[RMDB]
RNA sequence: GGGAACGACUCGAGUAGAGUCGAAAAUUCUACAACAGCCUUGUUGCUUUUUUUAUGUAUUUAUUUUCCAUACAUUUGUUCAGUACAUAUUUAUCAUGCUCCUACAAUGUGCCAAGUAUUGUGUGAGUUUGUGGGUUUCAAAAUAUGCUCAGCAAACGAGACGAAGUAUAUUCGUAUACUUCGUCUCAAAAGAAACAACAACAACAAC
Reactivity to 2A3 in 0.01 (KOAc 150mM, MgCl2 10mM, bicine 150mM(pH8.5), 24C), signal-to-noise 3, nucleotides 027 to 156: u050u020c010u110a160c030a100a020c010a050g100c020c030u030u020g000u030u010g000c010u050u080u030u060u020u030u090a070u030g020u010a060u050u130u020a160u080u140u150u030c030c000a010u020a080c010a040u040u030u040g010u020u060c030a010g010u050a080c000a010u030a020u010u080u060a090u090c050a040u060g010c000u000c010c010u020a020c020a030a020u050g020u040g160c060c020a100a030g040u040a050u080u050g010u010g000u010g000a000g010u000u060u100g050u060g020g060g080u030u130u110c080a060a050a000a010u030a010u030g000c000u010c030a010g040c020a030a010a040c070
Reactivity to DMS in 0.01 (KOAc 150mM, MgCl2 10mM, bicine 150mM(pH8.5), 24C), signal-to-noise 1, nucleotides 027 to 156: u010u010c030u010a070c040a050a300c120a030g010c030c040u000u000g020u000u000g000c000u000u000u000u000u000u000u000a080u030g000u000a060u000u000u000a140u030u000u000u000c100c090a150u000a050c020a030u000u000u010g010u000u000c070a110g040u000a040c010a020u010a030u000u010u010a100u020c040a080u000g010c030u010c040c020u010a050c040a040a000u000g010u020g000c080c080a070a190g040u010a060u000u010g030u000g030u000g000a090g020u010u000u000g050u000g000g010g030u010u020u000c080a080a030a030a060u010a050u010g020c000u000c050a150g020c040a020a040a060c070